Source: RMDB library TTRDES, as collected in RNAgym. An RNA of 177 nucleotides, treated with DMS and 2A3 and read out base by base. The 2A3 profile rests on 2,391 reads. The DMS profile rests on 1,049 reads. 2A3 adducts were read by reverse transcription with SuperScript II with manganese.
[RMDB]
RNA sequence: GGGAACGACUCGAGUAGAGUCGAAAAGAUAUGGACCAGUUACAGUAGGGAGUUCCUAUCGGAAACGAUAGAGAACGAAGAACUACACUGGUCCUAAGUCAAAGGUUCUUUGUUCGCAAAGAACCAACACACAUUCCGUGUUCGCACGGAAUGUGUGAAAAGAAACAACAACAACAAC
Reactivity to DMS in 0.01 (KOAc 150mM, MgCl2 10mM, bicine 150mM(pH8.5), 24C), signal-to-noise 2, nucleotides 027 to 126: g030a050u000a120u020g000g000a020c000c000a040g010u000u000a300c300a180g000u000a020g000g000g000a300g000u010u000c000c000u000a000u000c000g000g010a040a020a090c000g000a000u000a010g000a130g000a010a020c000g000a120a150g030a130a140c010u000a010c050a140c010u000g000g010u000c000c000u010a000a040g010u000c040a160a090a220g000g000u000u000c000u000u000u000g010u010u030c250g020c020a000a020a030g010a000a000c000c000a080a170
Reactivity to 2A3 in 0.01 (KOAc 150mM, MgCl2 10mM, bicine 150mM(pH8.5), 24C), signal-to-noise 1, nucleotides 027 to 126: g000a010u060a010u040g000g000a000c030c000a000g000u090u230a210c120a220g010u040a040g040g200g300a090g000u010u000c000c000u010a000u040c000g000g000a010a000a020c010g000a000u000a000g300a020g010a120a010c070g010a030a030g160a040a010c020u000a000c010a000c040u000g000g000u000c000c000u000a010a000g000u020c080a120a080a120g030g040u010u000c000u000u000u000g070u040u020c300g000c080a010a010a010g000a000a000c000c000a050a000